[RMDB]
RNA sequence: GGGAACGACUCGAGUAGAGUCGAAAAGAUAUGGACACCCAGGCUAGCUUACAUUCGGAAACGAAUGUGAAGCUUGGACCCUGAGGUGUCCUAAGUCAAAGGUCAUCGAGGUUCGCCUCGAUGACCAUCUCCCAUUUCUCUUCGGAGAAAUGGGAGAAAAAGAAACAACAACAACAAC
Reactivity to 2A3 in 0.01 (KOAc 150mM, MgCl2 10mM, bicine 150mM(pH8.5), 24C), signal-to-noise 2, nucleotides 027 to 126: g000a020u050a030u050g000g000a000c000a000c000c010c000a010g030g040c070u170a020g020c000u000u060a000c010a010u020u000c000g020g010a010a030a010c020g000a020a020u030g000u070g230a030a010g020c030u030u160g150g080a050c070c000c000u010g050a250g030g020u010g010u000c000c000u000a010a000g000u000c050a170a060a090g000g000u000c010a000u030c020g010a000g000g010u130u250c300g140c080c020u000c040g000a000u000g000a010c000c000a000
Reactivity to DMS in 0.01 (KOAc 150mM, MgCl2 10mM, bicine 150mM(pH8.5), 24C), signal-to-noise 2, nucleotides 027 to 126: g000a020u000a190u000g000g010a010c010a000c010c000c000a030g020g020c100u000a040g020c000u000u000a050c000a030u000u000c020g030g000a070a050a110c020g020a030a010u000g000u000g020a020a010g020c000u000u000g000g000a050c300c010c000u000g010a100g000g010u010g000u000c000c000u000a000a090g020u000c020a100a160a100g010g000u000c000a000u000c020g020a020g030g000u000u030c270g010c010c000u010c010g000a000u000g010a000c010c000a000